[RMDB]
RNA sequence: GGGAACGACUCGAGUAGAGUCGAAAACGUCCUAGUUUCGACUAGGACGAAAUAAAAUCAGCGGUAAUUAAUCGAGGCGUAUUACCGCUGAACGCCUCGAUAAAAUGCGAUGAUUCGUCAUCGCAAACACAAACUAGGGAUUCGUCCCUAGUUUGUGAAAAGAAACAACAACAACAAC
Reactivity to 2A3 in 0.01 (KOAc 150mM, MgCl2 10mM, bicine 150mM(pH8.5), 24C), signal-to-noise 5, nucleotides 027 to 126: c010g000u000c000c000u000a010g010u010u070u080c230g080a010c000u010a000g020g010a010c000g000a000a000a010u110a000a060a000a060u040c010a000g010c000g010g050u070a080a100u150u160a080a040u140c050g010a020g040g000c010g000u020a050u040u080a050c010c000g000c000u000g010a000a000c010g000c010c000u010c010g000a020u080a090a120a020a040u080g000c000g000a000u000g000a010u030u060c140g070u000c060a000u000c000g000c020a020a040a000
Reactivity to DMS in 0.01 (KOAc 150mM, MgCl2 10mM, bicine 150mM(pH8.5), 24C), signal-to-noise 3, nucleotides 027 to 126: c010g010u000c000c000u000a000g000u000u000u020c170g020a020c000u000a010g000g010a000c000g000a000a040a070u020a060a050a130a080u000c020a030g010c020g000g000u000a040a060u010u000a090a050u010c030g010a030g000g020c030g020u000a020u000u000a040c010c020g010c000u000g010a010a030c060g000c010c000u000c050g010a050u010a040a050a100a100u010g010c000g010a010u000g020a040u000u000c160g010u000c000a010u000c000g010c000a010a080a140
Structure probing data (2A3 and DMS) for a 177-nucleotide construct.
For DMS, 4,280 sequencing reads were counted.
The 2A3 profile rests on 9,355 reads.
Conditions: 150 mM KOAc, 10 mM MgCl2 and 150 mM bicine (pH 8.5), 24 C.
It was measured as part of the RMDB library M2PK50.